[RMDB]
Background
Chemical mapping of a 207-nucleotide RNA with DMS and 2A3. As a SHAPE reagent, 2A3 marks flexible, mostly unpaired nucleotides at the ribose 2'-OH. Conditions: 150 mM KOAc, 10 mM MgCl2 and 150 mM bicine (pH 8.5), 24 C. It was measured as part of the RMDB library OK3TST.

RNA sequence: GGGAACGACUCGAGUAGAGUCGAAAAUUUCAUAGAUACAUUUCUAGAUGUAGAACUAUUGAGUCAAAUGACAUGCACUUCUCAUAGGCUUCGGAAGUCACAUAUGGCCAAAUUGCUCUUCAGUAAGAUGGGGACAUUCCCACCAGCAAUGAUAGGAAAUACUACGGUCAUUCGUGACCGUAGUAUUAAAAGAAACAACAACAACAAC
Reactivity to DMS in 0.01 (KOAc 150mM, MgCl2 10mM, bicine 150mM(pH8.5), 24C), signal-to-noise 2, nucleotides 027 to 156: u000u000u000c040a080u000a060g020a230u010a030c020a070u000u000u000c120u000a140g010a070u010g000u000a050g020a070a130c060u000a080u010u000g010a110g060u010c070a070a100a130u010g020a090c090a060u010g030c090a070c010u000u000c000u000c060a110u000a160g050g060c100u010u000c090g010g010a090a040g010u000c060a020c050a070u000a120u010g030g000c010c000a030a070a090u000u000g000c010u000c040u010u000c060a110g000u000a100a110g000a070u010g000g040g000g010a100c100a140u010u010c000c000c000a060c010c040a060g020c090a040a110u010g020a110u000a110g000g020a090
Reactivity to 2A3 in 0.01 (KOAc 150mM, MgCl2 10mM, bicine 150mM(pH8.5), 24C), signal-to-noise 4, nucleotides 027 to 156: u030u070u070c030a010u040a060g050a010u060a070c020a040u050u120u150c120u130a070g010a080u010g020u040a040g030a150a060c010u020a050u080u170g020a050g050u040c050a040a110a170u170g020a040c040a060u080g010c040a030c080u050u000c040u010c020a110u100a070g060g000c030u090u060c030g030g050a050a000g050u050c020a010c010a080u120a080u100g020g000c000c000a020a110a060u070u050g000c010u030c000u060u060c050a030g020u050a110a030g030a110u050g010g010g000g010a010c010a030u030u020c010c010c000a020c030c010a020g050c030a060a100u120g040a080u140a060g090g040a020